[RMDB]
RNA sequence: GGGAACGACUCGAGUAGAGUCGAAAAAUCGGCGGCGAAGGCCAGCCCCAGCUUGCGACACUCCUCGGUGUGCAAGAACAUCGCCUCGGGGUCGUUGGCGCCGAUGAUCACCAACUCCGGCUUGCCGAAAUGAUUACUGAUUCGUCAGUAAUCAUUUAAAAGAAACAACAACAACAAC
Reactivity to 2A3 in 0.01 (KOAc 150mM, MgCl2 10mM, bicine 150mM(pH8.5), 24C), signal-to-noise 8, nucleotides 027 to 126: a010u010c010g000g010c010g010g020c050g040a060a010g060g000c020c010a020g030c010c000c000c010a010g030c010u020u020g010c050g190a020c010a010c030u150c080c040u110c140g020g010u010g000u000g000c000a020a010g000a030a040c050a090u140c070g030c040c030u060c070g040g000g010g000u040c040g050u050u060g060g010c000g000c010c020g000a010u020g000a050u060c020a030c220c010a030a080c040u050c050c010g030g000c040u040u090g030c010c010g040
Reactivity to DMS in 0.01 (KOAc 150mM, MgCl2 10mM, bicine 150mM(pH8.5), 24C), signal-to-noise 9, nucleotides 027 to 126: a040u000c010g010g010c010g020g010c020g020a050a050g010g010c030c030a140g010c040c010c010c050a140g000c010u000u000g000c000g010a040c010a020c010u000c140c130u010c170g010g010u000g010u000g000c020a030a020g000a100a090c110a080u000c080g000c070c030u000c090g010g000g000g010u000c030g000u000u000g010g010c010g020c020c010g000a030u000g010a130u000c090a170c030c030a110a120c140u000c090c020g000g010c040u000u010g010c020c030g010